[RMDB]
RNA sequence: GGGAACGACUCGAGUAGAGUCGAAAAGUGGCGGCCUUGCGGCUUUGCACGCUGGCAAGUGUGGCGAACACGGCGGCCAGCACCCCCAGGGCCAGGUGUUCCCACUGGAAGCUCGCGCGCGGGGCGCCUCAAAAUUAGCCUUCGGGCUAAUUUUGAGAAAAGAAACAACAACAACAAC
Reactivity to DMS in 0.01 (KOAc 150mM, MgCl2 10mM, bicine 150mM(pH8.5), 24C), signal-to-noise 3, nucleotides 027 to 126: g030u020g020g010c010g020g020c000c020u000u020g020c030g000g020c030u010u030u060g060c040a170c110g000c010u000g030g010c010a080a130g020u000g020u020g000g020c230g010a060a040c020a010c030g010g000c220g000g010c020c000a050g040c050a300c030c010c000c020c050a240g020g010g010c010c030a040g000g020u000g000u000u000c000c010c010a120c000u030g000g000a180a120g010c000u020c240g000c010g000c030g030c000g000g000g000g020c000g010c000
Reactivity to 2A3 in 0.01 (KOAc 150mM, MgCl2 10mM, bicine 150mM(pH8.5), 24C), signal-to-noise 2, nucleotides 027 to 126: g080u100g030g010c020g030g290c030c010u050u060g030c060g070g010c030u050u060u140g010c010a020c070g000c010u040g030g000c030a170a210g090u000g000u030g130g120c190g060a060a000c020a000c020g130g050c060g080g000c030c000a030g030c000a080c000c020c000c000c020a100g000g040g000c000c020a030g030g020u000g010u000u000c000c000c000a010c000u010g020g040a130a040g010c010u020c020g020c010g000c000g000c000g000g010g030g030c010g010c000
About this RNA
Structure probing data (DMS and 2A3) for a 177-nucleotide construct. The reactions ran in a buffer of 150 mM KOAc, 10 mM MgCl2 and 150 mM bicine (pH 8.5), at 24 C. Reactivities are given for positions 27 through 126. It was measured as part of the RMDB library OK1LIB.